[RMDB]
RNA sequence: GGGAACGACUCGAGUAGAGUCGAAAAUGUGAUGACUUUCCACUGACCAUACUACUGCAAUGAUGUUAUUCUGGGCCAAACUUCGGAAUCAAUUCUUGUCUGCUGCCUGAUUCAAUUAUUUUUAAUGCACCCUGUGGAUUUUUACUUGCUAAAGUAAGAUCCAGGUAUUAUUCGUAAUACCUGGAUCAAAAGAAACAACAACAACAAC
Reactivity to 2A3 in 0.01 (KOAc 150mM, MgCl2 10mM, bicine 150mM(pH8.5), 24C), signal-to-noise 5, nucleotides 027 to 156: u150g040u040g030a070u040g040a060c030u040u070u060c030c020a030c040u090g040a080c000c040a050u060a130c040u030a030c020u030g010c010a030a100u110g040a040u060g060u070u050a060u110u030c030u060g010g020g000c010c030a070a060a060c060u110u100c090g050g020a020a040u060c030a040a090u140u020c040u060u110g060u040c020u040g030c010u050g010c010c010u030g030a040u060u020c030a050a030u060u060a090u080u160u030u070u150a090a060u050g030c020a020c020c000c020u020g010u040g060g000a070u100u000u030u030u060a020c020u030u060g070c040u080a120a030a030g010u010a040a040
Reactivity to DMS in 0.01 (KOAc 150mM, MgCl2 10mM, bicine 150mM(pH8.5), 24C), signal-to-noise 2, nucleotides 027 to 156: u010g000u000g010a100u000g010a060c050u000u010u010c010c010a100c140u000g000a090c020c040a070u000a110c040u000a070c030u010g000c040a100a090u010g030a090u010g010u000u000a110u000u000c020u000g020g010g020c000c020a070a100a100c070u010u010c070g020g000a130a080u010c040a040a150u000u000c020u000u000g020u000c040u000g030c010u000g010c040c030u000g010a140u000u000c030a090a100u010u000a110u030u000u000u000u000a050a120u000g020c040a050c040c020c000u000g040u000g010g000a030u000u000u000u000u000a070c050u000u000g010c050u020a070a090a130g010u010a100a200